[RMDB]
RNA sequence: GGGAACGACUCGAGUAGAGUCGAAAAGUGUGGGAACAGCUAAUAUGGACCAUCGCAGUUUCACAUUGAAUUUCGAAGUCAACGCUUUUAUUUAUGACCAACAAAUUGCCAAAAAAUUAAAACAAGCAAAACGUACCAUUUUCGAAUGGUACGUUUUAAAAGAAACAACAACAACAAC
Reactivity to 2A3 in 0.01 (KOAc 150mM, MgCl2 10mM, bicine 150mM(pH8.5), 24C), signal-to-noise 2, nucleotides 027 to 126: g000u000g010u020g040g030g010a050a000c010a010g000c010u040a050a020u080a210u280g060g050a030c000c050a040u050c050g000c000a020g000u000u060u080c020a030c030a020u030u150g160a170a050u060u090u040c030g040a020a020g020u020c010a000a080c040g060c040u030u120u080u000a050u020u110u030a130u110g040a040c040c020a010a030c010a030a100a060u100u020g030c010c040a080a090a090a100a040a030u210u210a130a190a030a010c050a020a000g100c020
Reactivity to DMS in 0.01 (KOAc 150mM, MgCl2 10mM, bicine 150mM(pH8.5), 24C), signal-to-noise 3, nucleotides 027 to 126: g030u010g010u010g010g010g020a060a090c050a090g000c060u010a070a120u000a110u000g010g010a120c090c080a050u000c130g030c090a040g030u000u020u000c040a090c040a050u000u000g020a060a050u010u000u000c090g020a190a100g010u010c020a070a090c220g000c090u020u000u000u010a070u020u010u000a050u010g000a130c050c070a040a150c190a020a040a040u000u010g000c020c060a000a030a080a030a020a070u000u020a050a030a070a080c190a040a070g000c170